Background
The data come from the RNA Mapping Database (RMDB), library OK3TST. Chemical mapping of a 207-nucleotide RNA with 2A3. 2A3 adducts were read by reverse transcription with SuperScript II with manganese. The 2A3 profile rests on 389 reads. The RNA was probed in 150 mM KOAc, 10 mM MgCl2 and 150 mM bicine (pH 8.5) at 24 C.
RNA sequence: GGGAACGACUCGAGUAGAGUCGAAAAUAAUCACUAUACUUUUCCUUCAAUAGCAGAUGGUGAGCUAUAUGUGUUUGGAGAACCUGAGAAUGGGAAGUUAGGUCUUCCCAAUCAGCUCCUGGGCAAUCACAGAACACCCCAGCUGGUGUCUGAAAUACACCAAAAUGCAUUUCGAUGCAUUUUGGUGAAAAGAAACAACAACAACAAC
Reactivity to 2A3 in 0.01 (KOAc 150mM, MgCl2 10mM, bicine 150mM(pH8.5), 24C), signal-to-noise 1, nucleotides 027 to 156: u040a000a100u100c010a010c060u040a090u080a210c030u170u090u060u110c010c010u120u100c140a080a100u090a110g050c070a090g010a110u100g000g060u050g000a030g020c040u030a000u010a070u160g100u000g040u100u020u120g030g000a050g010a110a050c060c060u000g020a000g000a250a260u050g020g000g050a070a000g010u040u130a140g030g300u100c000u000u000c000c000c000a000a040u000c000a030g000c010u050c020c000u040g010g010g000c030a030a030u180c010a060c040a130g130a140a030c030a040c050c010c080c120a030g010c170u110g000g070u000g020u090c100u000g000a060a000a130u300a040